[RMDB]
This 177-nucleotide RNA was probed chemically with DMS and 2A3. As a SHAPE reagent, 2A3 marks flexible, mostly unpaired nucleotides at the ribose 2'-OH. The RNA was probed in 150 mM KOAc, 10 mM MgCl2 and 150 mM bicine (pH 8.5) at 24 C.
RNA sequence: GGGAACGACUCGAGUAGAGUCGAAAAACUGUGCUAGCAAGUGUGCUCCCUCGAUCCUAACGCUACGCUCCAGCGCACCGCUUCGAGCGUAGCCGCUUGCGCAAUUGCACAGUCGUUUUGACCAUGCACUGAUGGCGUGAUUCGUCACGCCAUCAGUAAAAGAAACAACAACAACAAC
Reactivity to DMS in 0.01 (KOAc 150mM, MgCl2 10mM, bicine 150mM(pH8.5), 24C), signal-to-noise 2, nucleotides 027 to 126: a030c000u000g020u000g000c000u000a070g000c030a010a030g000u040g010u030g000c010u000c040c060c010u000c090g000a120u020c090c010u010a120a060c090g000c000u000a010c040g010c020u010c030c130a080g010c000g020c150a140c230c140g000c070u000u000c270g000a020g020c040g000u000a000g020c000c000g020c000u000u000g000c010g000c150a070a100u000u010g030c010a000c010a030g020u010c040g000u000u000u010u020g060a210c050c010a120u030g000c150
Reactivity to 2A3 in 0.01 (KOAc 150mM, MgCl2 10mM, bicine 150mM(pH8.5), 24C), signal-to-noise 4, nucleotides 027 to 126: a000c010u000g000u010g010c010u040a040g000c000a010a010g000u090g050u180g100c050u080c060c010c000u030c050g050a070u040c000c070u100a150a040c070g000c030u030a010c030g020c060u010c000c050a010g010c020g010c080a110c100c070g060c050u050u060c070g020a000g000c040g000u000a000g000c000c000g000c000u010u010g000c000g010c080a130a220u150u120g000c000a000c000a010g000u020c040g020u040u050u070u100g100a100c000c020a080u140g030c040